Chemical mapping of a 177-nucleotide RNA with 2A3 and DMS. It was measured as part of the RMDB libraries RFM100 and RFMREP. The reactions ran in a buffer of 150 mM KOAc, 10 mM MgCl2 and 150 mM bicine (pH 8.5), at 24 C. For DMS the reverse transcriptase was MarathonRT.

RNA sequence: GGGAACGACUCGAGUAGAGUCGAAAAGAAAGAAAGAGUAGCCUAAUGUAGUGUGCCGUUACCUCUGAAUUUGGAUGAAUUUAUGGACAUACAAGCUCAGAGGUAACGGCCACUAAAUUGGCCAUAAUGUAUCUCUUAACUUCGGUUAAGAGAUACAAAAAGAAACAACAACAACAAC
Reactivity to 2A3 in 0.01 (KOAc 150mM, MgCl2 10mM, bicine 150mM(pH8.5), 24C), signal-to-noise 2, nucleotides 027 to 126: g050a030a080a000g140a040a150a000g130a040g110u190a020g010c000c020u030a020a000u090g010u030a010g030u060g300u300g030c010c000g000u010u000a000c020c000u000c000u030g000a020a030u020u020u000g010g020a030u030g020a080a200u080u160u110a170u260g060g000a010c000a000u070a030c000a010a000g010c030u000c000a000g000a000g050g000u010a000a000c010g000g000c000c000a000c000u000a000a000a000u000u000g010g000c020c000a000u100a220a030
Reactivity to DMS in 0.01 (KOAc 150mM, MgCl2 10mM, bicine 150mM(pH8.5), 24C), signal-to-noise 5, nucleotides 027 to 126: g000a100a110a090g010a080a070a080g010a100g010u010a110g020c010c000u020a030a010u000g010u000a020g010u000g000u040g010c020c000g010u000u000a000c000c000u000c000u010g000a010a000u000u000u010g000g000a020u000g010a090a100u020u020u040a150u050g020g010a180c010a010u000a010c010a000a010g000c040u000c000a000g010a010g000g010u000a000a000c000g000g000c000c000a000c000u000a000a010a020u000u000g000g010c010c070a080u020a060a130